The record gives the reactivity of an RNA of 207 nucleotides to 2A3. The reactions ran in a buffer of 150 mM KOAc, 10 mM MgCl2 and 150 mM bicine (pH 8.5), at 24 C.

[RMDB]
RNA sequence: GGGAACGACUCGAGUAGAGUCGAAAACUUCACCAGUGGCUUUUCUGAUUGGGUGAACGCGCGGCGCAUCAUCAACGGGCUCGACCGUGCCGGCGAUAUUGCACGCUACGCCAAGCUCUUCAAUGCCGCUCUGCAGGAUGCUUCCUGAUGCCCAGGAGUAGUCCACUCUUUUCGAAGAGUGGACUACAAAAGAAACAACAACAACAAC
Reactivity to 2A3 in 0.01 (KOAc 150mM, MgCl2 10mM, bicine 150mM(pH8.5), 24C), signal-to-noise 1, nucleotides 027 to 156: c000u060u010c020a120c120c010a040g000u030g020g020c070u190u150u230u180c080u100g080a170u100u030g000g000g020u040g070a030a020c040g000c000g030c030g060g010c020g000c030a090u100c010a010u030c030a090a100c090g030g000g000c000u040c050g140a170c070c040g020u090g150c000c000g060g000c040g040a020u060a070u060u270g000c080a020c120g000c000u120a000c050g000c000c010a000a000g000c010u040c000u120u110c050a080a070u130g000c000c010g000c020u080c030u090g000c010a040g010g040a060u090g050c090u070u120c010c050u030g020a060u090g020c070c040c000a030g030g000a080
For 2A3, 565 sequencing reads were counted.